[RMDB]
Structure probing data (2A3) for a 207-nucleotide construct. Source: RMDB library OK3TST, as collected in RNAgym. Values cover nucleotides 27 to 156.
RNA sequence: GGGAACGACUCGAGUAGAGUCGAAAACGAUCAGUACGUUCGCGUACUGAUCGAAGCUACUGGAGACAGUAGCAAGUCUAAGACCUUGUUAGGCGGAAACAAGGAAUUAUGGAGGAAGGCCGGACCUCCAUACUUAGACAACCGCCAACCGGCCAACGAGUAAUAUCCGUUUCGACGGAUAUUACUCAAAAGAAACAACAACAACAAC
Reactivity to 2A3 in 0.01 (KOAc 150mM, MgCl2 10mM, bicine 150mM(pH8.5), 24C), signal-to-noise 3, nucleotides 027 to 156: c020g000a010u000c000a010g010u000a010c010g010u030u120c220g010c010g110u020a000c000u000g010a000u000c000g000a000a000g000c000u000a000c000u010g000g010a040g010a030c000a000g000u000a000g000c010a000a010g010u000c000u010a010a030g020a120c010c010u010u000g000u020u050a160g030g160c100g050g050a070a040a000c010a010a010g000g080a110a080u210u050a020u070g010g010a000g040g000a110a220g010g000c000c030g060g060a250c000c000u030c000c000a020u000a010c010u010u020a000g010a030c020a040a050c090c060g110c080c010a020a040c000c000g000g000c000c010a010a030c110